The data come from the RNA Mapping Database (RMDB), library OK2TST. Chemical mapping of a 177-nucleotide RNA with DMS and 2A3.

[RMDB]
RNA sequence: GGGAACGACUCGAGUAGAGUCGAAAAGAAGUGGAGAAGAGCAUACUACAUUCCACGAAGGCUAACAAUAGCUGCAAAGCUGAAGGCAGAGCAGUUAAGGUCUGCUACUCUAACAGUUUAUGGGGUAGAGUGGGAUAGCUUUCGAGCUAUCCCACUCAAAAGAAACAACAACAACAAC
Reactivity to DMS in 0.01 (KOAc 150mM, MgCl2 10mM, bicine 150mM(pH8.5), 24C), signal-to-noise 2, nucleotides 027 to 126: g040a120a170g020u000g010g000a090g030a080a100g010a110g000c170a070u000a060c070u000a120c110a110u040u000c010c000a050c020g010a110a160g000g020c010u000a040a130c150a080a150u000a040g010c000u000g000c010a020a210a260g000c000u000g040a060a120g030g020c000a040g000a300g000c000a000g040u000u000a060a050g010g030u000c020u000g000c080u010a010c040u000c010u000a040a150c120a030g010u000u020u010a120u000g000g000g000g000u000a120
Reactivity to 2A3 in 0.01 (KOAc 150mM, MgCl2 10mM, bicine 150mM(pH8.5), 24C), signal-to-noise 1, nucleotides 027 to 126: g090a090a020g000u000g030g040a040g020a190a050g030a070g040c060a080u090a120c010u010a000c070a070u120u040c010c000a030c010g000a030a000g000g000c020u010a150a000c040a230a100u040a090g000c020u040g000c000a100a000a000g000c010u180g130a110a050g080g010c000a000g000a020g000c000a000g000u020u020a010a020g000g000u010c020u050g010c010u050a040c010u010c010u030a060a140c030a010g020u050u020u020a150u070g000g000g000g040u060a040